[RMDB]
RNA sequence: GGGAACGACUCGAGUAGAGUCGAAAACAGGGUCCCGAGUGAGGCUUAUCCCGGGGAACUCGGCCCAGUCCCGAGAUGGCCGCGUCCGAGGUUCCCAUUCAAAGGGGAGAGGGGGGGACUUGGAGCAUGACUACCAGCUUCGGCUGGUAGAAAAGAAACAACAACAACAAC
Reactivity to 2A3 in 0.01 (KOAc 150mM, MgCl2 10mM, bicine 150mM(pH8.5), 24C), signal-to-noise 4, nucleotides 027 to 129: c040a030g040g000g010u060c000c010c030g010a020g020u130g020a050g020g030c040u120u150a070u160c000c030c020g010g010g000g000a020a040c000u010c050g020g040c000c020c000a010g020u020c020c010c020g050a060g030a100u110g030g030c030c030g020c050g020u000c000c000g020a010g030g010u040u040c010c010c010a020u060u060c080a030a050a060g000g000g000g000a050g010a030g020g010g010g000g000g000g000a000c000u020u040g030g000a020g000c080a070u110g030a030
Reactivity to DMS in 0.01 (KOAc 150mM, MgCl2 10mM, bicine 150mM(pH8.5), 24C), signal-to-noise 2, nucleotides 027 to 129: c120a140g000g020g000u000c000c000c010g060a050g000u030g000a100g030g040c080u020u050a110u030c020c010c020g040g020g020g030a050a060c040u000c010g000g000c010c020c020a200g030u030c070c010c020g030a010g000a130u040g060g000c010c030g030c180g010u030c040c010g020a080g030g020u000u000c000c000c000a130u030u040c100a030a090a080g010g000g000g000a070g000a130g000g000g000g000g000g000g000a030c060u060u040g020g000a060g030c110a000u080g020a230
An RNA of 170 nucleotides, treated with 2A3 and DMS and read out base by base. Reactivities are given for positions 27 through 129. Conditions: 150 mM KOAc, 10 mM MgCl2 and 150 mM bicine (pH 8.5), 24 C. The DMS profile rests on 16,174 reads. The data come from the RNA Mapping Database (RMDB), library 15KLIB.